[RMDB]
RNA sequence: GGGAACGACUCGAGUAGAGUCGAAAACUACCCGGUGGAAACAACUGAAGCUUCAACGCCUUUUUUUCCAAUCUUCUUUAGCACCGGGCUAGGGAGUAAGCCCGUGGAACCUUAGUUUUGUUCCCUCGGGACUUACUUGUGGUUCCCGUGGUGCACUCCCCAUAAAUGUGUUCGCACAUUUAUGGGGAAAAGAAACAACAACAACAAC
Reactivity to 2A3 in 0.01 (KOAc 150mM, MgCl2 10mM, bicine 150mM(pH8.5), 24C), signal-to-noise 3, nucleotides 027 to 156: c050u130a120c000c000c010g020g020u070g010g050a090a020a040c010a020a030c140u080g010a230a010g000c040u220u290c150a090a070c110g040c020c020u030u040u010u000u000u010u020c080c020a140a260u060c070u180u010c000u050u170u170a050g010c000a000c030c000g020g020g030c020u050a060g070g200g000a000g020u030a030a000g000c010c000c020g000u040g000g000a000a000c010c020u080u060a200g070u110u250u290u250g020u030u040c000c000c030u070c040g040g010g060a100c000u000u000a020c000u020u040g150u040g000g010u130u230c000c010c000g080u130g010g020u030g000c030a030c040u020

An RNA of 207 nucleotides, treated with 2A3 and read out base by base. For 2A3, 1,036 sequencing reads were counted. The reactions ran in a buffer of 150 mM KOAc, 10 mM MgCl2 and 150 mM bicine (pH 8.5), at 24 C.